[RMDB]
RNA sequence: GGGAACGACUCGAGUAGAGUCGAAAAGAUAUGGAGACCCGUAGACAUGCUAUUACCUCGGAAACGAGGUUAUAGCAACAGCUAUAGGGUCUCCUAAGUCAAACUGCCAUCGUUCGCGAUGGCAGAAGAUCAAGAGUUACUUCGGUAACUCUUGAUCAAAAGAAACAACAACAACAAC
Reactivity to 2A3 in 0.01 (KOAc 150mM, MgCl2 10mM, bicine 150mM(pH8.5), 24C), signal-to-noise 2, nucleotides 027 to 126: g000a000u010a040u120g000g010a010g000a010c000c020c030g010u010a000g020a080c130a210u300g000c000u000a000u010u010a000c000c000u000c030g020g030a060a040a020c020g000a010g000g000u000u000a000u000a000g000c010a020a020c070a030g030c010u030a010u160a220g000g040g000u000c000u030c000c010u020a000a000g020u000c000a030a080a100c020u000g000c000c000a000u000c010g070u080u120c300g040c000g160a000u040g000g000c000a000g000a000a000
Reactivity to DMS in 0.01 (KOAc 150mM, MgCl2 10mM, bicine 150mM(pH8.5), 24C), signal-to-noise 2, nucleotides 027 to 126: g000a040u000a300u010g020g000a020g000a000c000c000c000g000u000a020g000a070c140a250u010g010c000u000a020u000u000a020c000c010u010c000g000g000a080a070a160c000g010a000g000g000u000u000a000u000a010g000c000a030a060c270a130g000c010u000a020u000a120g070g000g040u000c000u000c000c000u000a010a060g010u000c010a110a090a270c000u000g000c000c000a030u000c000g000u000u020c300g000c040g030a010u000g010g000c000a000g000a030a070

Structure probing data (2A3 and DMS) for a 177-nucleotide construct. For 2A3, 4,179 sequencing reads were counted. Source: RMDB library TTRDES, as collected in RNAgym. DMS adducts were read by reverse transcription with MarathonRT. For 2A3 the reverse transcriptase was SuperScript II with manganese. Conditions: 150 mM KOAc, 10 mM MgCl2 and 150 mM bicine (pH 8.5), 24 C.